Record summary: Chemical mapping of a 177-nucleotide RNA with DMS and 2A3. The 2A3 profile rests on 6,070 reads. The reactions ran in a buffer of 150 mM KOAc, 10 mM MgCl2 and 150 mM bicine (pH 8.5), at 24 C.

[RMDB]
RNA sequence: GGGAACGACUCGAGUAGAGUCGAAAAACUAUACUUUGGCCGCAGAUAUCAUGUAACGGUGUAGAUGUAAAUCACCAAUUUUGGAUCGGUGACAGAGAAGAUAUGUUUGAAGGAGGUGUACAUUACAUCAUGUUAUGUCAUUCGUGACAUAACAUGAAAAAGAAACAACAACAACAAC
Reactivity to DMS in 0.01 (KOAc 150mM, MgCl2 10mM, bicine 150mM(pH8.5), 24C), signal-to-noise 9, nucleotides 027 to 126: a060c040u010a060u020a060c040u000u020u000g010g020c060c010g010c030a050g010a050u000a060u020c050a030u010g010u010a060a080c250g000g030u000g010u020a040g010a090u030g020u030a040a090a090u020c010a030c010c030a070a170u010u020u010u000g010g000a030u000c040g010g010u000g000a050c070a060g000a050g010a100a080g000a060u020a030u010g010u000u010u010g020a060a100g010g010a130g000g000u020g010u010a050c150a080u020u020a060c150a110
Reactivity to 2A3 in 0.01 (KOAc 150mM, MgCl2 10mM, bicine 150mM(pH8.5), 24C), signal-to-noise 8, nucleotides 027 to 126: a010c040u050a020u110a150c040u060u040u090g060g000c020c010g000c020a020g040a100u160a070u160c060a040u100g060u170a060a100c090g010g030u050g050u100a030g030a160u090g090u270a020a080a070u060c000a010c010c000a040a080u120u120u100u130g090g040a050u050c050g000g010u010g020a020c040a030g070a000g010a060a020g060a040u070a050u200g150u050u090u120g080a070a050g050g050a020g030g020u050g010u050a040c050a070u070u120a020c020a050